An RNA of 207 nucleotides, treated with 2A3 and read out base by base.
RNA sequence: GGGAACGACUCGAGUAGAGUCGAAAAGUUAAGUGCUAAACAUGACACUAUCUCACUAUCUCACAGUUGAUUAAUAAACUGACAUCAUGUGUCGUGUGAUGGCUAUUAGUCACAUUUGGCCACUUAAGUGAGAUAGUGGCAGCUUUAGCACUUAAAAACCUACCCUCCACUUCGGUGGAGGGUAGGUAAAAGAAACAACAACAACAAC
Reactivity to 2A3 in 0.01 (KOAc 150mM, MgCl2 10mM, bicine 150mM(pH8.5), 24C), signal-to-noise 1, nucleotides 027 to 156: g090u040u040a000a010g010u010g000c000u000a020a020a020c090a190u010g000a010c010a030c000u000a000u000c020u030c000a000c020u060a040u070c050u040c040a040c000a030g050u060u030g220a180u070u080a090a140u010a150a080a000c000u030g000a020c020a060u150c000a000u160g120u050g010u130c040g030u010g030u020g120a120u030g000g000c060u020a080u050u200a020g120u050c050a010c030a100u050u010u140g010g010c020c040a090c070u200u140a150a000g010u000g000a000g000a000u000a010g000u000g000g010c000a000g000c010u020u000u000a000g010c000a000c010u000u000a000a000a000a000
The RNA was probed in 150 mM KOAc, 10 mM MgCl2 and 150 mM bicine (pH 8.5) at 24 C.